[RMDB]
RNA sequence: GGGAACGACUCGAGUAGAGUCGAAAACUUAAAGGUAUCCUUUUUGCUGGUUGAAUGUCCUGAGCUCACAAAAGGAGUUUUAAGCAUACUAUGGUAAACUUUUCAGUGGUCAGGUUAUGCUAGUAUGACAAUCGAUCUUUUUCGAAAGAUCGAUUGUAAAAGAAACAACAACAACAAC
Reactivity to 2A3 in 0.01 (KOAc 150mM, MgCl2 10mM, bicine 150mM(pH8.5), 24C), signal-to-noise 2, nucleotides 027 to 126: c010u020u060a140a000a000g130g010u080a070u200c000c000u010u040u000u120u190g000c030u020g010g070u080u070g130a180a130u070g090u060c000c000u010g010a040g010c060u090c180a000c000a060a070a010a040g050g000a030g010u000u040u010u140a050a010g050c000a000u140a170c100u120a180u190g070g020u120a040a030a030c020u050u030u100u110c020a000g030u020g020g090u010c000a010g010g050u050u020a040u050g000c020u030a010g030u060a130u160g080
Reactivity to DMS in 0.01 (KOAc 150mM, MgCl2 10mM, bicine 150mM(pH8.5), 24C), signal-to-noise 4, nucleotides 027 to 126: c030u010u020a050a090a110g000g010u000a090u000c020c000u000u010u010u010u000g030c020u000g010g000u010u000g010a100a100u000g000u010c010c020u000g000a060g020c080u010c060a030c050a040a060a090a050g000g010a030g010u000u000u000u000a050a100g010c040a020u000a050c150u000a140u000g010g010u000a050a020a030c020u000u010u000u000c060a300g010u010g000g000u000c050a020g000g000u000u010a030u000g010c020u000a030g020u000a050u000g010
Chemical mapping of a 177-nucleotide RNA with 2A3 and DMS. Conditions: 150 mM KOAc, 10 mM MgCl2 and 150 mM bicine (pH 8.5), 24 C. It was measured as part of the RMDB library OK2TRN. 2A3 adducts were read by reverse transcription with SuperScript II with manganese. Values are in units of 0.01, from 0 to 300, in steps of 10.